[RMDB]
RNA sequence: GGGAACGACUCGAGUAGAGUCGAAAAGAUAUGGACUUGGUUUGGAGACCCUCGGAAACGAGAAGGUCUAUGAAGAACUGAGUCCUAAGUCAAAACAACUGAACCAGGUUCGCCUGGUUCAGUUGAACUCAUCUUGUAGGUUCGCCUACAAGAUGAGAAAAGAAACAACAACAACAAC
Reactivity to DMS in 0.01 (KOAc 150mM, MgCl2 10mM, bicine 150mM(pH8.5), 24C), signal-to-noise 3, nucleotides 027 to 126: g000a040u000a300u000g000g000a000c000u000u000g010g010u000u010u000g030g010a030g010a020c000c000c000u000c000g010g020a070a080a200c020g010a010g000a110a100g020g000u000c000u010a110u000g010a230a150g000a000a020c010u000g000a020g000u000c010c000u000a000a080g000u000c020a070a060a130a230c000a010a010c010u010g000a000a000c000c010a010g000g000u000u010c270g010c000c000u020g000g000u000u000c000a000g020u000u000g000a060a160
Reactivity to 2A3 in 0.01 (KOAc 150mM, MgCl2 10mM, bicine 150mM(pH8.5), 24C), signal-to-noise 2, nucleotides 027 to 126: g030a020u060a020u140g010g000a000c010u010u010g020g000u000u000u040g030g000a000g010a000c000c000c000u000c020g010g050a080a070a040c020g010a020g050a280a130g030g000u010c010u020a300u070g070a020a050g020a000a010c000u010g000a000g010u000c000c000u000a010a000g020u000c020a000a030a160a280c000a010a000c010u000g000a000a000c010c000a000g010g020u080u060c240g110c040c000u000g000g000u000u000c000a000g000u010u000g000a000a000